Source: RMDB library OK2TST, as collected in RNAgym. An RNA of 177 nucleotides, treated with 2A3 and DMS and read out base by base. For DMS the reverse transcriptase was MarathonRT. As a SHAPE reagent, 2A3 marks flexible, mostly unpaired nucleotides at the ribose 2'-OH. The reactions ran in a buffer of 150 mM KOAc, 10 mM MgCl2 and 150 mM bicine (pH 8.5), at 24 C.
RNA sequence: GGGAACGACUCGAGUAGAGUCGAAAAGUCGAAUGUGCUCGGGCUGCACUGCUCUCAACACCGACUAGGAUGGAUAUCGUUGAUUCUGUGAAUCGAGUGACCCCGGCACGACGAUAUGAACAGCCUAAGGCGUAAUAAAUUUCGAUUUAUUACGCCUAAAAGAAACAACAACAACAAC
Reactivity to 2A3 in 0.01 (KOAc 150mM, MgCl2 10mM, bicine 150mM(pH8.5), 24C), signal-to-noise 8, nucleotides 027 to 126: g010u020c010g020a200a110u160g000u010g000c090u110c140g000g010g000c040u100g030c040a030c090u060g010c020u000c000u000c030a030a110c010a030c030c010g080a070c070u050a060g110g020a060u120g100g050a060u050a040u230c150g120u040u050g010a110u110u040c040u050g100u060g080a060a100u120c070g010a030g030u030g110a180c000c000c000c010g010g000c010a000c010g010a010c000g000a000u020a040u120g050a040a030c020a050g080c000c010u100a100
Reactivity to DMS in 0.01 (KOAc 150mM, MgCl2 10mM, bicine 150mM(pH8.5), 24C), signal-to-noise 9, nucleotides 027 to 126: g010u010c010g010a090a140u010g010u000g010c020u010c280g020g000g020c110u010g020c090a050c070u000g000c060u000c040u000c090a070a120c050a070c050c040g000a060c110u000a090g010g010a060u000g010g010a090u010a060u000c080g010u000u000g000a060u000u000c060u010g010u010g000a070a090u000c110g000a050g010u000g000a140c200c010c000c020g000g010c020a020c010g000a250c010g010a020u000a040u010g010a080a130c190a120g000c020c010u010a090